Record summary
Structure probing data (2A3) for a 207-nucleotide construct. The reactions ran in a buffer of 150 mM KOAc, 10 mM MgCl2 and 150 mM bicine (pH 8.5), at 24 C. High 2A3 reactivity points to a flexible backbone, as in loops and unpaired stretches. The 2A3 profile rests on 644 reads. For 2A3 the reverse transcriptase was SuperScript II with manganese.

[RMDB]
RNA sequence: GGGAACGACUCGAGUAGAGUCGAAAAGGCUCAGAUCGCCUCAAACCUCGGAUUGGAUAAAGAAGUAUACUCCGUAUCGAAAAGCGGGGAUUAUUUUGAUCCUUAUAAAGGUCAGCAUUUUGGAAUUCAUGAUGAAUUCUUAUAUGCUAGAUCUGAGGGAACCUUACCGAUUCGUCGGUAAGGUUCCAAAAGAAACAACAACAACAAC
Reactivity to 2A3 in 0.01 (KOAc 150mM, MgCl2 10mM, bicine 150mM(pH8.5), 24C), signal-to-noise 2, nucleotides 027 to 156: g020g000c020u080c080a010g000a110u070c040g020c010c010u110c030a130a110a070c000c000u030c100g130g120a190u020u110g010g010a010u070a160a110a090g050a110a000g070u010a050u070a210c020u000c010c000g030u050a110u270c140g070a010a140a050a070g010c000g010g000g010g010a020u100u000a000u000u050u040u090g010a000u040c010c000u070u030a190u050a140a110a010g020g010u020c040a000g010c000a000u020u070u080u150g030g010a000a000u000u010c040a100u210g240a180u200g000a040a000u020u010c000u020u050a140u000a000u020g000c000u010a050g000a000u020c020u000g000a040g030